[RMDB]
RNA sequence: GGGAACGACUCGAGUAGAGUCGAAAAGCAUGUUGGCGGAUGAUCUUCGCCCCGCAGGAUCGCAUGGUCGAUGUCGAUGUUGGGAGGAAGGCUGUUAUGAACUGCGUUGAAGAGCACGAUACGUGUCUCGUUAAGGGCAUUUCGAUGCCCUUAACGAAAAAGAAACAACAACAACAAC
Reactivity to DMS in 0.01 (KOAc 150mM, MgCl2 10mM, bicine 150mM(pH8.5), 24C), signal-to-noise 4, nucleotides 027 to 126: g020c040a040u010g020u000u010g010g010c030g010g010a070u000g000a080u010c080u010u000c040g000c020c020c050c040g000c050a070g010g000a070u000c020g020c070a150u010g020g020u000c080g010a070u010g000u010c050g000a090u010g020u000u000g030g000g000a070g010g010a060a060g010g000c030u010g000u000u010a080u000g000a070a080c050u000g000c040g010u000u000g000a070a090g000a070g010c020a020c040g010a150u010a080c100g010u000g010u010c070
Reactivity to 2A3 in 0.01 (KOAc 150mM, MgCl2 10mM, bicine 150mM(pH8.5), 24C), signal-to-noise 2, nucleotides 027 to 126: g040c020a020u120g020u110u080g130g060c050g010g040a050u080g020a040u100c050u050u020c030g060c000c000c000c000g030c020a010g000g110a030u030c010g000c120a130u180g120g050u130c000g040a040u040g060u160c050g030a050u060g060u130u100g020g030g020a040g050g070a030a000g070g000c020u000g000u140u060a090u090g010a020a020c010u010g000c020g060u020u060g020a110a040g030a020g050c010a000c020g050a040u160a230c070g020u020g030u050c000
The record gives the reactivity of an RNA of 177 nucleotides to DMS and 2A3.
Values cover nucleotides 27 to 126.
Conditions: 150 mM KOAc, 10 mM MgCl2 and 150 mM bicine (pH 8.5), 24 C.
DMS adducts were read by reverse transcription with MarathonRT.